[RMDB]
Description:
Structure probing data (2A3 and DMS) for a 177-nucleotide construct. Values are in units of 0.01, from 0 to 300, in steps of 10. The RNA was probed in 150 mM KOAc, 10 mM MgCl2 and 150 mM bicine (pH 8.5) at 24 C. Reactivities are given for positions 27 through 126.
RNA sequence: GGGAACGACUCGAGUAGAGUCGAAAAGAUAUGGAAUCAUGACCUUCAUCGAUCUAUGAUGUCGGAAACGACAUAUAGGGAGAAGCAUGAUUCCUAAGUCAAAGACGUAUUCUUCGGAAUACGUCAACUGACACACUAACUUCGGUUAGUGUGUCAGAAAAGAAACAACAACAACAAC
Reactivity to 2A3 in 0.01 (KOAc 150mM, MgCl2 10mM, bicine 150mM(pH8.5), 24C), signal-to-noise 2, nucleotides 027 to 126: g010a000u020a010u050g000g000a000a010u010c010a010u020g110a180c120c000u000u000c020a180u300c020g040a000u000c000u000a000u070g270a010u080g050u010c000g010g000a000a000a010c010g000a010c000a010u050a000u010a010g020g000g000a040g010a000a000g020c010a000u000g000a000u010u050c000c000u000a000a000g000u000c040a150a070a100g000a000c000g000u000a000u010u030c020u050u090c300g140g010a000a000u000a000c050g000u010c000a010a000
Reactivity to DMS in 0.01 (KOAc 150mM, MgCl2 10mM, bicine 150mM(pH8.5), 24C), signal-to-noise 2, nucleotides 027 to 126: g000a010u000a000u020g010g000a020a000u000c000a000u020g010a160c300c010u000u000c010a300u010c270g000a000u000c000u000a010u010g020a030u000g040u000c010g040g030a000a010a020c000g020a000c000a020u000a020u000a000g000g040g010a020g000a030a010g020c010a000u000g000a020u010u000c000c000u010a000a070g000u000c010a140a090a180g000a000c000g030u000a020u000u000c000u000u010c300g020g000a050a010u000a000c000g010u000c000a010a080